[RMDB]
Description
Chemical mapping of a 207-nucleotide RNA with 2A3. Values cover nucleotides 27 to 156. It was measured as part of the RMDB library OK3TST. Conditions: 150 mM KOAc, 10 mM MgCl2 and 150 mM bicine (pH 8.5), 24 C. 2A3 adducts were read by reverse transcription with SuperScript II with manganese.
RNA sequence: GGGAACGACUCGAGUAGAGUCGAAAAUUACAAUGAUUCCAGAUACCACCAUUGAAAUUUCUAUGGAACGUGCAGCAGGUCUCCAAAAACUUAUAGAUAAACUUGAAGAUGAUGAUGACGUUCAAAAUGUUUACCACAAUGCUGAAUUCCCAGAGGAGGUGAUCAAAAUGUUCGCAUUUUGAUCACCAAAAGAAACAACAACAACAAC
Reactivity to 2A3 in 0.01 (KOAc 150mM, MgCl2 10mM, bicine 150mM(pH8.5), 24C), signal-to-noise 1, nucleotides 027 to 156: u130u100a100c030a070a060u140g030a100u060u120c000c000a010g060a040u170a130c000c100a000c000c030a000u030u030g070a070a140a120u130u180u100c120u060a100u030g160g000a060a000c010g030u080g100c070a000g000c010a000g050g010u000c000u000c000c000a000a070a000a010a070c070u140u170a030u010a300g070a040u170a160a040a000c000u010u040g030a040a000g010a000u090g000a060u000g000a000u040g000a000c000g000u000u000c000a000a000a060a120u190g050u150u140u120a000c000c010a010c000a090a060u120g010c000u010g030a010a060u100u000c000c000c000a030g040a010g040g070a000